[RMDB]
RNA sequence: GGGAACGACUCGAGUAGAGUCGAAAAGACGCCUAAUGGCGAAAAUGUAAAAUCAACUACACAGCAGAUAAAUACAACUGCUAAAUCUCGCAACUAGUUGAUCUAGUCCAGCGGUGAGAUCCGCAGAAAUGGUAGUCCGAUUCGUCGGACUACCAUUAAAAGAAACAACAACAACAAC
Reactivity to DMS in 0.01 (KOAc 150mM, MgCl2 10mM, bicine 150mM(pH8.5), 24C), signal-to-noise 2, nucleotides 027 to 126: g000a270c060g010c000c030u060a190a170u120g000g000c000g000a000a020a030a070u000g010u000a030a160a190a030u000c010a000a000c030u000a000c070a080c170a080g000c000a030g000a080u010a070a130a090u010a130c260a100a140c050u000g000c010u000a060a020a000u020c000u000c090g000c070a040a080c300u010a000g000u000u000g000a000u000c070u020a090g030u000c010c030a100g000c040g000g030u010g000a000g000a060u010c030c010g040c010a120g010a140
Reactivity to 2A3 in 0.01 (KOAc 150mM, MgCl2 10mM, bicine 150mM(pH8.5), 24C), signal-to-noise 3, nucleotides 027 to 126: g000a000c040g030c000c000u210a220a130u280g020g000c050g030a110a040a000a050u200g020u170a000a060a020a040u040c000a010a020c010u030a020c130a000c000a080g000c020a010g010a120u120a090a270a000u270a070c140a200a040c050u020g000c010u070a100a000a070u110c120u050c070g020c030a040a000c070u000a030g020u000u010g000a000u020c020u020a040g020u040c020c060a010g000c000g010g000u030g010a060g010a020u050c000c000g000c030a000g180a040
An RNA of 177 nucleotides, treated with DMS and 2A3 and read out base by base. DMS (dimethyl sulfate) methylates the pairing face of unpaired adenines and cytosines. The DMS profile rests on 2,203 reads. For 2A3 the reverse transcriptase was SuperScript II with manganese.